[RMDB]
RNA sequence: GGGAACGACUCGAGUAGAGUCGAAAAGGUACGCGCUUGAAAAGAUAUCGAGCGCGCCCCAAGAUUUCCUCACCCGCGUCGGAGACGCGGGGAAGAGCGCAAGAGCAUACGGAAGUCUGACAGUGUCCUUAACCUUAGGAUUCGUCCUAAGGUUAAGAAAAGAAACAACAACAACAAC
Reactivity to 2A3 in 0.01 (KOAc 150mM, MgCl2 10mM, bicine 150mM(pH8.5), 24C), signal-to-noise 9, nucleotides 027 to 126: g060g020u100a030c010g010c000g010c000u010u010g030a040a090a070a060g210a120u230a080u170c010g000a000g000c000g000c000g000c000c000c000c000a040a010g010a020u010u010u010c000c000u010c090a030c000c000c000g000c000g000u000c100g300g120a270g000a130c000g000c000g000g000g000g000a050a000g010a010g000c060g000c090a180a100g060a050g110c020a050u120a190c080g000g010a010a010g000u000c010u010g020a040c040a110g090u040g070u190c010
Reactivity to DMS in 0.01 (KOAc 150mM, MgCl2 10mM, bicine 150mM(pH8.5), 24C), signal-to-noise 8, nucleotides 027 to 126: g000g030u010a100c010g000c000g010c010u000u000g000a020a110a170a190g010a220u040a100u000c010g010a000g010c000g020c010g010c180c030c010c040a120a030g000a020u000u000u000c000c000u000c070a230c000c000c010g020c000g010u010c020g030g020a290g010a010c010g030c010g010g020g000g000a040a090g000a100g010c060g010c180a110a130g020a130g010c010a100u010a090c150g000g000a020a010g010u000c000u000g000a090c160a080g000u020g000u010c080
The record gives the reactivity of an RNA of 177 nucleotides to 2A3 and DMS. It was measured as part of the RMDB libraries RFM100 and RFMREP. The reactions ran in a buffer of 150 mM KOAc, 10 mM MgCl2 and 150 mM bicine (pH 8.5), at 24 C.